Structure probing data (2A3 and DMS) for a 177-nucleotide construct. The 2A3 profile rests on 12,750 reads. Source: RMDB library OK2TRN, as collected in RNAgym. For DMS, 15,483 sequencing reads were counted. The reactions ran in a buffer of 150 mM KOAc, 10 mM MgCl2 and 150 mM bicine (pH 8.5), at 24 C.
[RMDB]
RNA sequence: GGGAACGACUCGAGUAGAGUCGAAAAUACAUGAAGGCAAUGCAAGACCUAGAAUAUCCUCUUUCCAUGAGAUUGGUUACAUUGAUAUCCUGACAUAAUGAUUUAAUAGCUGGCAAGUAACCAGUGACAUUUCAUAAGAGUUCGCUCUUAUGAAAUGAAAAGAAACAACAACAACAAC
Reactivity to 2A3 in 0.01 (KOAc 150mM, MgCl2 10mM, bicine 150mM(pH8.5), 24C), signal-to-noise 8, nucleotides 027 to 126: u160a020c060a040u080g050a060a010g050g000c020a030a040u050g020c050a090a020g020a050c000c000u040a060g110a190a080u130a070u160c020c020u020c000u050u110u020c060c050a090u140g030a030g010a110u050u070g020g020u030u010a030c040a080u060u060g030a030u050a060u220c000c010u020g070a030c030a020u240a120a100u150g090a040u090u110u120a170a110u070a060g020c010u010g020g000c050a130a080g040u050a060a040c000c000a000g000u000g020a010
Reactivity to DMS in 0.01 (KOAc 150mM, MgCl2 10mM, bicine 150mM(pH8.5), 24C), signal-to-noise 9, nucleotides 027 to 126: u010a100c110a050u010g010a260a060g010g000c040a060a040u010g010c060a100a080g000a060c030c020u000a070g010a110a080u010a080u000c080c030u000c060u000u010u010c090c100a090u010g010a070g010a080u000u000g000g010u000u000a070c040a060u000u000g010a110u010a070u010c020c010u000g000a110c150a070u000a070a070u010g000a130u010u010u000a070a100u010a180g010c020u000g000g000c020a040a080g010u010a090a050c010c010a020g010u000g010a180